[RMDB]
RNA sequence: GGGAACGACUCGAGUAGAGUCGAAAAGCUCUGGAAUUGAGGCCCCUCUAACAAUAUUCCAAAACUACUUCGCAGAGUAAUCUGCCGAAUCGUAGGAUGCCCAUUACUAUCUAUUUUUGGAGCAUCUAAAACUGUCAGUGCUUCGGCACUGACAGAAGUAGUUACUGAAGUUCGCUUCAGUAACUACAAAAGAAACAACAACAACAAC
Reactivity to DMS in 0.01 (KOAc 150mM, MgCl2 10mM, bicine 150mM(pH8.5), 24C), signal-to-noise 1, nucleotides 027 to 156: g040c030u010c020u030g020g010a080a090u010u000g010a100g000g010c070c030c060c080u030c040u000a110a140c090a110a180u000a120u000u000c040c010a030a060a170a160c060u010a060c070u010u010c060g000c010a030g010a060g010u010a130a160u000c010u000g000c010c060g010a060a030u000c060g010u000a170g030g010a000u010g000c000c010c000a090u010u010a110c090u010a230u000c190u000a200u000u000u050u000u000g010g010a110g020c000a000u000c000u010a060a100a090a070c010u000g010u010c030a000g000u000g000c000u000u010c300g060g050c000a020c010u000g000a000c000a010g010a010a090
Reactivity to 2A3 in 0.01 (KOAc 150mM, MgCl2 10mM, bicine 150mM(pH8.5), 24C), signal-to-noise 4, nucleotides 027 to 156: g010c010u010c070u110g010g030a030a030u010u080g010a030g020g060c000c010c030c020u070c100u080a130a090c060a080a070u070a040u110u050c010c010a040a020a050a050c020u030a010c010u000u000c000g010c020a000g010a020g040u120a150a140u000c010u000g050c080c040g030a020a020u060c060g000u020a030g070g020a000u000g000c000c000c000a020u040u030a060c080u110a100u170c040u110a260u140u060u010u000u020g020g010a100g010c000a000u000c010u050a010a030a070a070c000u000g000u000c000a000g000u000g010c000u020u050c160g050g000c000a000c000u000g000a000c000a000g000a000a000